Background:
The record gives the reactivity of an RNA of 177 nucleotides to 2A3 and DMS.
[RMDB]
RNA sequence: GGGAACGACUCGAGUAGAGUCGAAAAGCACCGGCUGGCGAAGCAAUAACAAAAUAGCGGUAAGACUUCGAGGAAUGAACACCCAACGUGGUCUCGGUAGCGAUCAUGAAUGGGCGCAGAUAGAGCGAGAAUCACUGACUUUCGAGUCAGUGAUUCUAAAAGAAACAACAACAACAAC
Reactivity to 2A3 in 0.01 (KOAc 150mM, MgCl2 10mM, bicine 150mM(pH8.5), 24C), signal-to-noise 1, nucleotides 027 to 126: g020c010a020c000c000g000g040c080u040g050g030c030g010a010a000g040c000a000a150u150a010a040c030a030a100a010a010u080a050g060c060g000g080u030a080a000g060a090c010u030u050c140g010a060g000g080a090a170u110g030a030a010c050a000c000c000c000a000a010c010g040u040g000g000u010c030u040c030g090g030u080a040g050c010g060a010u010c000a000u060g280a270a060u000g030g040g040c020g010c020a010g080a110u110a040g140a010g120c050g010
Reactivity to DMS in 0.01 (KOAc 150mM, MgCl2 10mM, bicine 150mM(pH8.5), 24C), signal-to-noise 2, nucleotides 027 to 126: g020c060a070c000c000g000g040c060u010g010g000c040g010a070a100g000c080a120a090u020a080a130c100a030a090a070a130u000a110g030c030g030g000u000a130a090g040a130c050u000u000c040g010a120g010g000a120a050u000g020a040a090c100a060c040c000c010a040a270c040g050u000g000g020u000c000u030c050g030g010u020a040g020c090g000a020u000c020a020u000g010a080a170u000g000g000g000c050g000c080a030g020a140u000a050g000a070g020c070g000

2A3 adducts were read by reverse transcription with SuperScript II with manganese. As a SHAPE reagent, 2A3 marks flexible, mostly unpaired nucleotides at the ribose 2'-OH. DMS (dimethyl sulfate) methylates the pairing face of unpaired adenines and cytosines.